[RMDB]
An RNA of 207 nucleotides, treated with DMS and 2A3 and read out base by base.
The RNA was probed in 150 mM KOAc, 10 mM MgCl2 and 150 mM bicine (pH 8.5) at 24 C.
The 2A3 profile rests on 1,872 reads.
It was measured as part of the RMDB library PDB130.
RNA sequence: GGGAACGACUCGAGUAGAGUCGAAAAACGAGAAGAUUUCUUCUAUGGGUAACGGUUACACAUUCGAGCUCGAGUCGCUUAUUUUUGCUUCUCUCGCUCGUUCCGUUUGUGAGAUACUGGACUUAGACUCGUCUGAGGUCACUGUUUACGGAGACGAUCAGUAUAUCCUCUUCGGAGGAUAUACUGAAAAAGAAACAACAACAACAAC
Reactivity to DMS in 0.01 (KOAc 150mM, MgCl2 10mM, bicine 150mM(pH8.5), 24C), signal-to-noise 2, nucleotides 027 to 156: a080c020g000a060g000a070a030g000a300u000u000u010c010u000u000c030u010a110u000g000g010g000u000a070a110c070g020g010u000u050a110c030a050c020a140u000u010c010g000a100g020c030u000c030g010a040g030u000c030g020c040u000u010a080u000u000u000u000u000g000c000u000u000c020u010c020u000c030g020c120u010c030g020u000u000c010c020g010u000u010u000g000u000g000a100g010a090u000a050c040u000g020g000a040c040u010u010a040g010a050c030u000c170g010u000c020u000g000a100g000g010u000c020a050c030u000g000u000u000u000a090c030g010g010a090g030a080c050g020a160
Reactivity to 2A3 in 0.01 (KOAc 150mM, MgCl2 10mM, bicine 150mM(pH8.5), 24C), signal-to-noise 4, nucleotides 027 to 156: a000c090g020a040g030a070a030g040a130u150u140u060c000u040u000c040u100a140u120g080g020g050u060a060a030c070g040g010u130u160a040c060a000c010a060u040u050c050g000a000g010c020u010c010g020a020g030u000c010g010c000u040u060a110u180u210u020u090u170g040c000u040u050c010u000c000u000c040g020c030u010c010g000u010u020c000c020g010u010u110u130g040u020g010a040g000a040u100a160c030u050g040g000a010c010u040u070a030g020a100c020u020c100g030u010c050u080g100a040g040g020u050c020a020c050u040g060u100u070u060a040c020g040g000a040g040a050c030g020a020